[RMDB]
RNA sequence: GGGAACGACUCGAGUAGAGUCGAAAAGCCACGGCAAGUGGAGUUAGCGAGAAGAGACUAGGCUUUGGUUUCUUCAAGUGAAGCGGUCACCAAUCAGGUGUGGUAGUUACCGUAAAAAAUCCGGAUUAAUGCCUCAGCGCGUUCGCGCGCUGAGGAAGUCCCUAAUUUAGUUCGCUAAAUUAGGGACAAAAGAAACAACAACAACAAC
Reactivity to DMS in 0.01 (KOAc 150mM, MgCl2 10mM, bicine 150mM(pH8.5), 24C), signal-to-noise 1, nucleotides 027 to 156: g050c020c050a070c020g000g000c050a140a170g000u000g000g000a070g000u050u000a180g010c060g020a300g010a060a050g000a050g000a020c000u000a090g060g000c200u010u010u000g030g010u000u000u000c010u000u000c020a100a300g000u010g010a070a270g020c020g010g010u010c020a060c020c030a090a050u000c110a120g030g000u000g000u020g000g000u000a030g030u000u020a060c030c000g040u030a000a040a040a070a090a150u010c030c000g000g030a300u000u000a090a100u030g060c010c010u000c000a030g000c010g000c000g000u000u020c300g060c000g010c040g060c030u000g020a010g010g000a010a040
Reactivity to 2A3 in 0.01 (KOAc 150mM, MgCl2 10mM, bicine 150mM(pH8.5), 24C), signal-to-noise 3, nucleotides 027 to 156: g010c000c000a000c010g040g060c200a120a180g010u030g000g030a020g060u230u030a020g010c010g000a010g010a030a010g000a000g000a010c010u050a050g100g260c050u230u220u210g030g000u000u010u000c000u000u010c010a010a010g040u030g040a060a000g000c030g030g140u110c010a010c020c000a020a060u070c020a060g110g070u130g020u040g130g020u020a040g050u120u110a060c020c000g000u040a000a040a000a000a000a280u050c060c010g020g010a060u080u230a110a050u250g050c000c000u010c000a010g000c000g000c010g040u040u090c090g030c000g000c010g000c040u000g000a000g000g000a000a000

Source: RMDB library M2RFPK, as collected in RNAgym. Structure probing data (DMS and 2A3) for a 207-nucleotide construct. The 2A3 profile rests on 1,428 reads. DMS adducts were read by reverse transcription with MarathonRT. Conditions: 150 mM KOAc, 10 mM MgCl2 and 150 mM bicine (pH 8.5), 24 C.